Structure probing data (DMS) for a 177-nucleotide construct.

RNA sequence: GGGAACGACUCGAGUAGAGUCGAAAAGGAGAAUGAAGACAAGUGGAAGCGACUGUCUCGACAGAUAGCUGACAUCAUCCUCCCAAUGUUAGCCAAACAGCAGGUUUGUCCCCGCAGCCUUGGCUUGACUAGCCGCAUUUUUCGAAAUGCGGCUAGUAAAAGAAACAACAACAACAAC
Reactivity to DMS in 0.01 (KOAc 150mM, MgCl2 10mM, bicine 150mM(pH8.5), 24C), signal-to-noise 2, nucleotides 027 to 126: g000g010a020g020a000a020u010g000a230a070g010a110c180a100a190g020u010g000g030a140a060g010c010g020a110c000u000g010u010c060u010c300g010a050c070a050g000a090u010a150g010c000u010g000a220c010a040u000c030a050u000c030c050u020c000c010c170a080a090u000g010u000u000a050g020c010c000a020a110a030c200a090g000c110a050g000g000u000u000u000g000u010c110c100c010c110g000c110a030g020c090c090u010u000g000g010c010u000u000g010